[RMDB]
RNA sequence: GGGAACGACUCGAGUAGAGUCGAAAAGAUAUGGAUGUGAGGGAGGUACAUUCGGAAACGAAUGAAUACCGAAGAACUCAUGUCCUAAGUCAAAAGUGAUUCCGAAACUUCGGUUUCGGAAUCACAACGAAGUUUUAAAGUUCGCUUUAAAACUUCGAAAAGAAACAACAACAACAAC
Reactivity to 2A3 in 0.01 (KOAc 150mM, MgCl2 10mM, bicine 150mM(pH8.5), 24C), signal-to-noise 1, nucleotides 027 to 126: g010a010u020a000u030g020g000a000u010g000u000g020a010g040g040g000a000g000g000u000a000c000a010u000u000c000g010g010a010a000a010c010g020a010a000u010g010a100a190u040a070c010c000g080a150a010g000a010a000c000u000c000a000u000g010u000c010c000u000a010a000g000u010c000a000a050a080a120g000u000g000a000u000u020c010c010g000a020a010a010c000u080u150c300g110g000u000u000u000c000g020g030a010a000u000c000a000c000a010a010
Reactivity to DMS in 0.01 (KOAc 150mM, MgCl2 10mM, bicine 150mM(pH8.5), 24C), signal-to-noise 3, nucleotides 027 to 126: g000a010u000a000u010g000g000a010u000g000u000g010a020g000g000g000a010g020g040u000a060c000a020u010u000c000g020g000a000a000a010c010g020a010a000u000g000a170a180u010a020c000c010g000a070a160g000a120a230c000u000c010a010u000g010u000c010c000u000a000a060g010u000c010a090a070a140a120g010u010g000a010u000u000c000c000g010a010a000a010c000u000u010c250g020g010u000u000u000c010g000g010a000a020u000c000a000c000a020a100